Source: RMDB library OK2TST, as collected in RNAgym. An RNA of 177 nucleotides, treated with 2A3 and DMS and read out base by base. The reactions ran in a buffer of 150 mM KOAc, 10 mM MgCl2 and 150 mM bicine (pH 8.5), at 24 C. The 2A3 profile rests on 2,100 reads. Reactivities are given for positions 27 through 126.
RNA sequence: GGGAACGACUCGAGUAGAGUCGAAAAUAAUACCUGGUUCCGCGACCAGGUUGCGGCAGGACGUCAGCAACUCGAGCACGGUGAUGUGCUUCCCCAUGACAUGGUCGAAUCCUCUGCUGCAGCAUGGAAGUGUUACACACUUCGGUGUGUAACACUUAAAAGAAACAACAACAACAAC
Reactivity to 2A3 in 0.01 (KOAc 150mM, MgCl2 10mM, bicine 150mM(pH8.5), 24C), signal-to-noise 2, nucleotides 027 to 126: u050a010a060u070a040c000c010u010g000g030u060u000c110c100g090c110g060a020c020c000a000g000g000u000u000g000c010g010g040c000a010g010g040a040c030g040u030c010a030g060c020a080a030c010u030c170g030a020g000c020a010c010g050g210u230g130a180u220g010u020g020c000u030u040c030c000c000c000a030u020g040a020c030a080u160g080g030u060c060g090a040a070u070c000c020u050c010u000g010c000u010g010c010a010g020c010a020u090g040g080
Reactivity to DMS in 0.01 (KOAc 150mM, MgCl2 10mM, bicine 150mM(pH8.5), 24C), signal-to-noise 3, nucleotides 027 to 126: u020a140a080u000a070c010c000u010g010g010u000u010c080c160g030c300g000a120c010c010a030g000g010u000u000g010c010g000g010c010a030g000g000a050c080g000u000c000a050g000c120a030a050c130u010c130g010a020g010c000a030c030g000g000u000g020a140u020g020u000g010c030u010u000c010c000c000c040a180u010g000a030c030a150u000g010g000u000c070g000a110a080u010c020c020u010c010u000g000c020u000g020c040a110g000c190a050u020g000g010